This 177-nucleotide RNA was probed chemically with 2A3 and DMS. It was measured as part of the RMDB library M2PK50. Values are in units of 0.01, from 0 to 300, in steps of 10. Reactivities are given for positions 27 through 126. For DMS, 4,367 sequencing reads were counted.
RNA sequence: GGGAACGACUCGAGUAGAGUCGAAAACAUAAACGCUUCGGCGUUUAUGAAAUAAAAUCAGCGGUAAGCUCGCGUAAAAUAUUACCGCUGAACGCGAGCUAAAAACGGGACAGUUCGCUGUCCCGAACCUAAUUUUACUGUUCGCAGUAAAAUUAGGAAAAGAAACAACAACAACAAC
Reactivity to 2A3 in 0.01 (KOAc 150mM, MgCl2 10mM, bicine 150mM(pH8.5), 24C), signal-to-noise 5, nucleotides 027 to 126: c000a000u000a010a000a010c010g000c010u040u060c220g140g000c010g000u000u000u010a000u000g000a000a010a000u160a010a070a010a100u120c040a030g020c010g060g060u090a110a000g000c010u000c010g010c000g010u020a020a170a170a130u200a070u100u140a050c000c010g000c030u010g030a000a000c000g010c010g010a010g000c020u030a070a020a010a020a040c010g000g000g000a000c000a000g010u040u060c110g040c120u000g000u000c000c000c000g000a000a000
Reactivity to DMS in 0.01 (KOAc 150mM, MgCl2 10mM, bicine 150mM(pH8.5), 24C), signal-to-noise 3, nucleotides 027 to 126: c000a000u000a000a000a000c010g030c000u010u010c180g030g010c010g010u000u000u000a000u010g000a060a100a100u000a040a070a090a090u010c060a070g010c010g000g020u000a080a030g010c030u000c010g040c030g020u010a050a070a060a090u000a080u000u000a140c020c010g010c040u000g010a040a030c030g010c020g010a000g010c020u010a050a040a050a080a080c040g000g000g000a010c010a010g000u000u020c190g000c000u000g010u000c000c010c000g010a000a030